An RNA of 177 nucleotides, treated with 2A3 and DMS and read out base by base.
Reactivities are given for positions 27 through 126.
It was measured as part of the RMDB library TTRDEL.
[RMDB]
RNA sequence: GGGAACGACUCGAGUAGAGUCGAAAAGAUAUGGACACCUACCUUCUUGGAUUUAUACAGACGUCGGAAACGACCUCUGUAUUGUCAGAAGAUGGUGUCCUAAGUCAAAGUGUUCUUCGGAACACAAGCUAGACUAAGAGUUCGCUCUUAGUCUAGCAAAAGAAACAACAACAACAAC
Reactivity to 2A3 in 0.01 (KOAc 150mM, MgCl2 10mM, bicine 150mM(pH8.5), 24C), signal-to-noise 4, nucleotides 027 to 126: g020a010u060a040u160g010g000a000c010a000c000c010u050a080c030c000u030u040c020u090u230g230g020a050u300u300u110a020u040a010c010a000g000a000c020g000u010c010g050g000a050a080a070c010g000a010c000c010u010c000u000g000u010a010u000u000g020u010c000a000g000a010a000g010a010u020g000g010u000g000u010c000c000u000a010a000g010u000c030a030a080a090g000u010g020u010u000c020u020u060c230g150g000a010a000c010a010c000a010a010
Reactivity to DMS in 0.01 (KOAc 150mM, MgCl2 10mM, bicine 150mM(pH8.5), 24C), signal-to-noise 4, nucleotides 027 to 126: g000a030u000a300u000g000g010a000c000a010c010c000u000a160c100c010u010u000c000u000u010g010g000a030u010u010u000a000u000a000c000a000g010a020c300g010u000c000g010g010a130a110a200c000g010a010c000c100u000c000u010g010u000a000u000u000g010u000c000a020g000a010a010g000a030u000g000g020u010g000u000c000c000u000a010a050g000u000c050a090a100a120g020u000g010u000u000c000u000u010c190g010g000a010a000c000a000c020a050a100

High DMS reactivity at an A or C suggests that its Watson-Crick edge is free.